RNA sequence: GGGAACGACUCGAGUAGAGUCGAAAAGUAUGCCGACCACAAAGACAGGUUAAAGUAGACGUCUUUGCCCGUCGACCAGGGAUGCAUCAUCGGCGCGUAGAUGCCGCCGGGCAUCUGCCAUGACGACCUUGAUCCCCCUAUUCGUAGGGGGAUCAAGAAAAGAAACAACAACAACAAC
Reactivity to DMS in 0.01 (KOAc 150mM, MgCl2 10mM, bicine 150mM(pH8.5), 24C), signal-to-noise 2, nucleotides 027 to 126: g040u030a000u000g020c000c020g010a210c060c050a150c170a050a080a090g000a040c030a070g010g010u020u000a030a030a090g020u000a060g010a140c250g040u000c010u010u010u010g000c000c010c090g000u000c030g000a060c150c220a080g000g000g010a100u010g000c090a090u000c030a120u000c050g010g020c000g000c170g020u000a000g020a020u000g000c000c000g040c140c160g000g020g010c000a000u000c010u000g000c040c090a030u000g000a080c080g010a050c150
Reactivity to 2A3 in 0.01 (KOAc 150mM, MgCl2 10mM, bicine 150mM(pH8.5), 24C), signal-to-noise 1, nucleotides 027 to 126: g070u020a060u140g040c000c010g010a020c020c000a080c050a100a050a000g020a000c050a040g100g080u230u300a030a050a040g090u140a060g070a180c050g090u060c000u030u000u010g010c000c000c000g010u010c040g020a020c000c050a020g000g000g010a020u060g020c010a030u000c000a040u090c100g060g010c040g030c050g090u050a030g000a040u050g010c010c020g130c050c040g060g000g000c000a010u000c000u000g000c020c000a060u150g040a000c050g030a040c000
Source: RMDB library OK2TST, as collected in RNAgym. Chemical mapping of a 177-nucleotide RNA with DMS and 2A3. The reactions ran in a buffer of 150 mM KOAc, 10 mM MgCl2 and 150 mM bicine (pH 8.5), at 24 C. For 2A3, 1,201 sequencing reads were counted.